[RMDB]
RNA sequence: GGGAACGACUCGAGUAGAGUCGAAAAAGUAGGAUCCGUUGGAUAUCGGGUUUGAAUGUGGGAGGCAUCAACUUCCAAUUCUAAAUACGUCUCAAGACCGAUAGAGUAUUAGUACCGUGAGGGAAUGGCCAGGUGAGUGAUUCGUCACUCACCUGGCAAAAGAAACAACAACAACAAC
Reactivity to 2A3 in 0.01 (KOAc 150mM, MgCl2 10mM, bicine 150mM(pH8.5), 24C), signal-to-noise 1, nucleotides 027 to 126: a000g070u070a050g000g000a000u010c000c000g050u110u020g000g000a020u010a060u050c050g000g000g000u120u000u000g000a060a000u140g000u050g300g000g000a000g030g010c060a290u160c080a190a090c000u000u030c000c000a000a000u020u000c030u000a000a000a000u250a000c060g000u020c110u080c000a010a190g060a070c000c010g000a030u130a010g050a000g050u180a000u300u220a000g000u020a020c000c000g000u000g020a050g000g000g110a160a190u020g030
Reactivity to DMS in 0.01 (KOAc 150mM, MgCl2 10mM, bicine 150mM(pH8.5), 24C), signal-to-noise 1, nucleotides 027 to 126: a100g040u080a140g000g030a050u040c060c030g000u000u000g040g000a020u000a050u020c000g020g000g010u060u000u050g020a020a000u000g020u020g000g050g030a000g000g040c110a070u080c150a040a080c030u000u000c000c000a020a020u000u000c000u080a000a040a150u000a040c120g000u030c040u020c050a080a050g000a070c000c020g010a140u000a020g000a120g000u000a010u010u020a020g010u040a130c060c000g000u110g000a130g000g000g000a070a050u030g050

The data come from the RNA Mapping Database (RMDB), library RFM100. An RNA of 177 nucleotides, treated with 2A3 and DMS and read out base by base.